[RMDB]
RNA sequence: GGGAACGACUCGAGUAGAGUCGAAAACAGAUAUGAAAAGACCGAGAGGUUCAAGCUUAUAGGGCAGAAAGCGGGGGACAGCAGUACUAAACAUUCCCUGUGGCUGAGACGAAGGUAGUACUCCAACAAAACGAGUACUAGUUCGCUAGUACUCGAAGUUAGGAGUUAAGUUCGCUUAACUCCUAACAAAAGAAACAACAACAACAAC
Reactivity to 2A3 in 0.01 (KOAc 150mM, MgCl2 10mM, bicine 150mM(pH8.5), 24C), signal-to-noise 5, nucleotides 027 to 156: c030a010g110a060u150a060u200g090a060a070a060a050g040a020c020c020g030a020g000a030g110g040u090u080c050a030a020g000c000u100u080a020u110a200g020g000g010c050a020g070a060a050a010g040c040g030g000g000g000g020a010c020a030g000c010a000g020u040a040c030u100a040a090a040c020a060u040u050c010c000c010u040g030u070g040g000c040u040g020a010g000a080c050g020a050a010g030g000u010a010g020u010a040c020u010c050c010a040a050c030a060a190a000a030c020g000a000g000u000a000c000u000a000g000u010u010c060g010c120u000a000g000u000a000c000u000c000g000a020a000
Reactivity to DMS in 0.01 (KOAc 150mM, MgCl2 10mM, bicine 150mM(pH8.5), 24C), signal-to-noise 3, nucleotides 027 to 156: c080a220g030a120u010a090u000g010a100a120a100a180g000a100c000c000g000a140g020a080g010g010u000u010c040a080a060g000c040u000u000a090u010a060g020g010g000c020a070g000a040a080a050g040c060g000g000g020g020g030a110c050a070g010c020a060g000u000a180c050u010a050a050a080c070a090u010u000c000c010c000u000g020u000g010g030c010u020g010a160g020a080c050g000a060a060g020g010u000a060g000u000a060c010u010c000c030a050a120c100a040a070a110a160c020g020a020g000u000a000c000u000a010g000u000u000c260g030c000u000a020g030u000a020c010u010c000g010a020a060